An RNA of 177 nucleotides, treated with 2A3 and read out base by base.
For 2A3 the reverse transcriptase was SuperScript II with manganese.
It was measured as part of the RMDB library OK1LIB.
Values cover nucleotides 27 to 126.
RNA sequence: GGGAACGACUCGAGUAGAGUCGAAAAGCGUCAUGCGUAUAAAUAAUUGCGUUGUUAUUAUUCAUCGCAUUCUUUUUGUCAGACGCAUGACGGAAGUAGCGUUUUGACAAAGAAAGAUCGCAUGAAAGGGAUUUUCUAACUUCGGUUAGAAAAUCCCAAAAGAAACAACAACAACAAC
Reactivity to 2A3 in 0.01 (KOAc 150mM, MgCl2 10mM, bicine 150mM(pH8.5), 24C), signal-to-noise 1, nucleotides 027 to 126: g040c020g000u000c010a020u000g000c020g050u080a100u070a050a180a020u140a020a020u120u060g020c030g030u030u000g030u010u070a130u060u040a110u090u110c000a000u020c040g000c000a020u040u010c000u010u020u030u000u010g000u020c000a000g000a030c000g010c020a000u060g100a050c010g040g000a070a000g080u110a010g010c020g000u020u040u170u090g000a000c000a000a040a000g080a000a040a030g050a000u040c050g000c020a000u020g040a000a000a030
The reactions ran in a buffer of 150 mM KOAc, 10 mM MgCl2 and 150 mM bicine (pH 8.5), at 24 C.